[RMDB]
RNA sequence: GGGAACGACUCGAGUAGAGUCGAAAACGACCUGAACGAGUGCGUUCAGGUCGAAGCGAGUGGUGACACUCGCAAGCACGUCAACUAUAAGCGCCCAUUAUAGUACAAACACAUAAAGCCCCGAUAUGUGUAGACGUGCAAGGGCGAACGGGGCAAAGAUUUAUGGCACUUUCGAGUGCCAUAAAUCAAAAGAAACAACAACAACAAC
Reactivity to 2A3 in 0.01 (KOAc 150mM, MgCl2 10mM, bicine 150mM(pH8.5), 24C), signal-to-noise 2, nucleotides 027 to 156: c020g000a000c000c000u010g020a000a020c000g030a080g290u300g230c030g020u000u000c010a000g000g010u000c000g000a010a000g010c010g000a000g000u000g020g020u050g010a000c000a010c020u000c000g000c000a000a000g000c000a010c010g000u000c000a040a040c040u030a020u000a050a070g090c110g150c060c030c010a020u040u000a000u000a000g000u030a060c090a030a190a020c010a000c010a010u010a040a070a090g000c000c000c000c010g000a030u010a000u040g010u000g010u000a050g010a000c000g000u010g000c020a020a100g150g010g060c100g040a060a010c020g000g000g000g000c000a040a000a000